[RMDB]
RNA sequence: GGGAACGACUCGAGUAGAGUCGAAAAUUGGAAAAUGAGCGAAUCACCUAAUCGGGAAAUCACAACGAUGCUGCUUGAAUUUGCAAAAAUAUAUGAUGUAUUAGGUGAUGUGUUUAAAUCCAAGGCCUACAAUGUGGCCGCUGCAACUAUUGCAAAAACUUGGAAAGGGAUUCGUCCCUUUCCAAGUAAAAGAAACAACAACAACAAC
Reactivity to DMS in 0.01 (KOAc 150mM, MgCl2 10mM, bicine 150mM(pH8.5), 24C), signal-to-noise 2, nucleotides 027 to 156: u000u020g040g000a040a010a080a170u000g000a020g000c020g010a050a070u000c040a020c000c010u010a000a040u000c070g090g070g020a080a230a090u000c040a040c040a070a120c050g020a130u010g050c080u000g000c070u020u010g020a070a130u000u000u000g010c080a030a050a090a080a050u010a120u020a100u010g010a050u000g010u010a050u000u000a050g010g010u010g050a000u000g030u010g020u000u000u000a040a090a190u020c000c010a030a090g020g020c000c000u010a120c120a110a130u000g010u010g050g020c040c000g040c020u000g000c020a090a170c140u010a090u010u000g040c000a050a050a070a050
Reactivity to 2A3 in 0.01 (KOAc 150mM, MgCl2 10mM, bicine 150mM(pH8.5), 24C), signal-to-noise 2, nucleotides 027 to 156: u050u000g050g020a020a010a000a070u030g000a030g040c010g050a050a010u010c000a000c010c000u000a020a000u010c030g000g020g140a110a100a050u020c000a050c060a110a130c070g090a070u050g030c040u030g020c010u070u120g050a160a150u130u090u150g000c010a000a000a030a130a000u180a020u040a040u110g060a030u060g050u090a020u010u000a000g000g000u000g010a010u000g020u000g000u000u050u040a040a120a040u050c010c000a000a010g010g000c000c000u030a050c110a070a140u120g020u070g120g000c050c020g000c010u060g000c000a010a080c050u080a080u140u040g000c000a050a000a000a090